RNA sequence: GGGAACGACUCGAGUAGAGUCGAAAAGAAGGAGAGUAGAUGAUUCGCGUUAAGUGUGUGUGAAUGGGAUGUCAUCACACAACGAAGCGAGAGCGCGGUGAAUCAUUGCAUCCGCUCCAAAACAAAACACAUGCCACUAGUUCGCUAGUGGCAUGUGAAAAGAAACAACAACAACAAC
Reactivity to DMS in 0.01 (KOAc 150mM, MgCl2 10mM, bicine 150mM(pH8.5), 24C), signal-to-noise 1, nucleotides 027 to 126: g050a140a190g050g000a020g010a030g000u000a250g020a000u000g020a020u000u000c020g040c070g010u000u080a040a040g000u020g010u010g000u000g000u050g000a070a090u010g010g020g000a020u000g000u020c100a000u000c000a020c000a010c000a000a000c000g000a050a090g050c050g000a140g000a090g000c000g000c050g030g000u050g000a010a040u020c000a000u000u020g050c000a000u000c000c000g000c000u000c030c050a070a090a070a090c140a050a090a050a190
Structure probing data (DMS) for a 177-nucleotide construct. It was measured as part of the RMDB library OK1LIB. Reactivities are given for positions 27 through 126. The RNA was probed in 150 mM KOAc, 10 mM MgCl2 and 150 mM bicine (pH 8.5) at 24 C.